[RMDB]
RNA sequence: GGGAACGACUCGAGUAGAGUCGAAAAAGAGCAAUCUGCGAUGGCGUGCCUUUUGUUUAAUGAGUCUGCGAGUCAGUGUUUGUGGCAAGACUAAGGGCUUCCGGCCCGGAGUCGCAGCGAAAGCAAGCAUUCAGUUCAACUUCGGUUGAACUGAAUGAAAAGAAACAACAACAACAAC
Reactivity to 2A3 in 0.01 (KOAc 150mM, MgCl2 10mM, bicine 150mM(pH8.5), 24C), signal-to-noise 1, nucleotides 027 to 126: a010g150a010g010c040a010a070u010c010u030g000c040g050a080u050g090g060c050g040u070g020c000c000u040u110u060u090g050u000u140u080a150a070u150g010a010g050u040c010u030g000c030g030a020g080u020c030a050g000u050g110u220u180u090g110u120g060g040c040a070a030g020a020c010u040a010a070g000g000g030c000u090u040c070c050g000g010c000c000c000g000g020a010g000u000c010g000c020a030g040c010g060a080a030a000g040c020a050a000g050
Reactivity to DMS in 0.01 (KOAc 150mM, MgCl2 10mM, bicine 150mM(pH8.5), 24C), signal-to-noise 3, nucleotides 027 to 126: a060g000a140g020c060a060a100u000c050u000g030c030g020a070u000g010g010c060g020u000g010c030c000u000u010u010u010g000u000u000u000a080a080u010g000a100g010u000c010u010g000c060g000a090g010u000c040a070g010u000g020u000u000u000g020u000g000g020c030a060a130g010a040c050u010a120a140g010g020g000c000u000u020c230c170g000g010c000c010c000g010g000a090g000u000c010g010c100a080g010c050g000a070a070a100g010c080a070a060g000
This 177-nucleotide RNA was probed chemically with 2A3 and DMS. The RNA was probed in 150 mM KOAc, 10 mM MgCl2 and 150 mM bicine (pH 8.5) at 24 C.